[RMDB]
Background: Chemical mapping of a 207-nucleotide RNA with 2A3. The reactions ran in a buffer of 150 mM KOAc, 10 mM MgCl2 and 150 mM bicine (pH 8.5), at 24 C.

RNA sequence: GGGAACGACUCGAGUAGAGUCGAAAAUAUACAAGACAGGGGUAUGGGUCCCCAGUCUCAAAUCUCAUUUCAUUCAUUCAUUCACUCAUUCAUUUAUUGCUUCCUGGGAACAAAACACUAAUUUUGAGACAUAUGCACCCAUGUGACUGCUGUGGUACAGUGCGCUAAAUUUCGAUUUAGCGCACUGAAAAGAAACAACAACAACAAC
Reactivity to 2A3 in 0.01 (KOAc 150mM, MgCl2 10mM, bicine 150mM(pH8.5), 24C), signal-to-noise 2, nucleotides 027 to 156: u080a000u010a020c050a070a000g090a050c020a100g010g010g000g030u070a060u040g020g000g110u190c000c010c000c010a000g000u030c010u000c000a070a100a070u080c080u050c080a080u160u090u130c020a040u080u030c000a000u050u080c020a060u130u110c010a030c050u030c030a010u090u030c030a070u060u090u290a130u140u110g080c020u000u010c010c000u030g060g030g000a090a080c030a040a160a070a020c130a010c020u100a080a190u050u050u080u150g050a050g030a000c010a000u110a060u130g000c000a010c030c000c000a050u040g020u000g020a020c040u030g000c000u040g040u090g050g050u140a040
For 2A3 the reverse transcriptase was SuperScript II with manganese. For 2A3, 613 sequencing reads were counted.